The data come from the RNA Mapping Database (RMDB), library TTRDES. The record gives the reactivity of an RNA of 177 nucleotides to 2A3 and DMS. For DMS, 3,327 sequencing reads were counted.
RNA sequence: GGGAACGACUCGAGUAGAGUCGAAAAGAUAUGGAACCUGGAGAGCUUUUGACGAGCGCCACUCGGAAACGAGUGGUUGCUCGAUAAGCUCCCAGGUUCCUAAGUCAAACCACUCUUCGGAGUGGAAGCUUAGCAAAUAGUUCGCUAUUUGCUAAGCAAAAGAAACAACAACAACAAC
Reactivity to 2A3 in 0.01 (KOAc 150mM, MgCl2 10mM, bicine 150mM(pH8.5), 24C), signal-to-noise 2, nucleotides 027 to 126: g010a020u060a030u150g000g020a000a000c000c010u050g070g030a300g010a020g300c030u170u190u300u300g300a200c040g020a000g000c000g020c000c010a010c000u000c010g010g020a110a090a040c010g000a000g030u010g010g000u020u010g010c010u010c000g000a000u010a010a000g000c000u000c000c000c000a010g000g000u000u010c010c000u000a010a000g000u000c000a030a000a040c020c000a000c000u010c010u050u080c300g170g000a000g010u010g010g000a020a010
Reactivity to DMS in 0.01 (KOAc 150mM, MgCl2 10mM, bicine 150mM(pH8.5), 24C), signal-to-noise 3, nucleotides 027 to 126: g010a030u010a300u000g000g010a020a010c010c000u010g010g010a220g020a000g010c000u000u000u000u000g010a220c140g000a010g010c000g000c010c010a010c000u010c000g000g010a110a110a220c000g000a020g010u000g010g000u000u010g030c000u000c010g020a030u000a020a020g020c000u000c010c000c000a020g000g000u000u000c000c000u010a010a050g030u000c030a160a190a200c020c000a010c000u000c000u000u000c190g000g020a020g020u000g010g010a040a050
Values cover nucleotides 27 to 126.